An RNA of 207 nucleotides, treated with DMS and 2A3 and read out base by base. For 2A3, 2,815 sequencing reads were counted. High 2A3 reactivity points to a flexible backbone, as in loops and unpaired stretches. The DMS profile rests on 2,023 reads. Values cover nucleotides 27 to 156.
RNA sequence: GGGAACGACUCGAGUAGAGUCGAAAACAGGUCGAUAGUACCAAUAACCCUGGUACCAAUAAGGUACUAUCGACCAUUUAGCUCUUCUUCUACAACACGCUCGCUGAAGAAGAGCGUUUCCGGUACCAGGGCAGCGAGCGGAAGGCCGAGAGGCCGAGCCAUAUAUACUAUUCGUAGUAUAUAUGGCAAAAGAAACAACAACAACAAC
Reactivity to DMS in 0.01 (KOAc 150mM, MgCl2 10mM, bicine 150mM(pH8.5), 24C), signal-to-noise 1, nucleotides 027 to 156: c070a110g010g000u000c000g030a000u000a030g020u000a010c000c010a120a120u000a100a110c010c000c000u020g010g000u000a030c010c000a190a200u000a110a060g020g010u010a000c000u000a000u010c000g010a020c020c010a000u000u000u010a160g000c020u000c000u000u000c020u000u010c040u020a080c070a100a110c020a060c030g010c000u010c020g040c020u000g000a030a100g060a050a090g020a010g020c060g000u010u000u000c110c050g000g030u000a050c000c000a030g000g010g050c060a010g010c040g030a000g060c000g040g010a120a150g020g010c000c020g000a300g000a300g020g000c000c010g010a130
Reactivity to 2A3 in 0.01 (KOAc 150mM, MgCl2 10mM, bicine 150mM(pH8.5), 24C), signal-to-noise 3, nucleotides 027 to 156: c020a040g000g010u000c010g000a000u010a000g010u010a010c020c070a060a150u160a080a080c000c000c000u000g000g010u010a010c030c030a090a200u160a220a100g010g000u000a000c000u000a000u000c000g010a000c000c000a010u030u050u140a020g000c000u000c010u060u000c010u050u020c040u090a120c040a270a070c100a060c090g000c000u020c000g000c020u030g020a020a010g020a020a020g000a020g050c030g010u030u110u020c040c040g000g000u010a000c000c000a000g000g000g000c000a010g000c000g010a000g000c000g010g020a040a020g030g000c010c000g040a020g020a030g040g020c010c000g010a000